[RMDB]
RNA sequence: GGGAACGACUCGAGUAGAGUCGAAAAAAUGCCGCCUCAAUUCCAAGCUCUUUCGUGGCACUGUAAACAGUCCUAUUGAGUUAGGGGCAGUCAACCACGUUGCGAAGCUAAAUUAUCUGGUCGAGAGUUACGAUUCCCUACUUCGGUAGGGAAUCAAUGAUUGUAACGAGUUCGCUCGUUACAAUCAAAAAGAAACAACAACAACAAC
Reactivity to 2A3 in 0.01 (KOAc 150mM, MgCl2 10mM, bicine 150mM(pH8.5), 24C), signal-to-noise 4, nucleotides 027 to 156: a000a010u070g050c020c030g010c000c010u020c020a040a080u110u000c010c020a060a010g000c000u010c010u020u050u060c060g010u030g000g010c070a000c010u030g070u140a080a150a090c020a110g070u060c000c010u020a030u070u090g160a150g300u060u030a020g020g000g000g000c010a000g010u010c010a000a050c010c000a020c050g020u010u020g040c130g130a070a030g000c030u060a080a120a090u210u170a120u060c050u040g020g020u050c050g020a010g000a010g150u110u110a060c070g000a000u000u000c000c000c000u000a000c000u010u030c120g060g000u000a000g000g000g010a000a000u000c000a000a010
Reactivity to DMS in 0.01 (KOAc 150mM, MgCl2 10mM, bicine 150mM(pH8.5), 24C), signal-to-noise 2, nucleotides 027 to 156: a060a070u000g020c010c040g040c010c020u000c050a030a080u020u000c050c060a140a160g010c010u000c020u010u000u000c030g050u000g000g020c050a060c010u010g030u000a060a050a090c050a160g010u010c010c010u000a060u000u000g020a260g000u010u000a020g000g000g010g000c010a010g010u000c020a080a030c020c000a030c020g040u000u000g020c120g000a100a090g010c020u000a030a010a060u000u010a100u000c040u040g020g000u000c030g020a110g000a180g040u000u000a090c090g000a040u010u000c000c000c000u010a030c000u010u000c300g060g000u000a000g020g000g020a000a000u000c000a030a120